RNA sequence: GGGAACGACUCGAGUAGAGUCGAAAAAAGAGCUCUCGUCUAUUGCAAGAUAUAAGUUACUGAGCAUGUUAUGUUGGAAAGAUAACAUGCUGUAGUAAUAAUGAAUUGCGGAACGCCUUAGGCUGGAAACAGAGCAGGGUUAGCAAUCGCUUGUAUACGAACUGAGAAACUUCGGUUUCUCAGUUCGAAAAGAAACAACAACAACAAC
Reactivity to 2A3 in 0.01 (KOAc 150mM, MgCl2 10mM, bicine 150mM(pH8.5), 24C), signal-to-noise 1, nucleotides 027 to 156: a000a000g090a010g010c010u000c010u000c010g070u020c030u080a190u050u160g000c060a080a000g030a090u140a040u020a210a150g000u000u000a000c000u000g050a000g000c000a000u000g000u000u000a050u000g190u240u080g110g060a060a090a050g040a030u000a000a000c000a000u000g000c000u000g020u010a010g000u010a000a000u000a000a040u050g070a070a040u010u000g000c000g010g050a070a020c060g090c020c020u130u100a080g070g000c000u010g000g040a010a030a080c020a140g000a010g110c010a010g000g000g010u020u110a010g000c000a030a040u020c030g000c110u020u030g000u000a050u010a100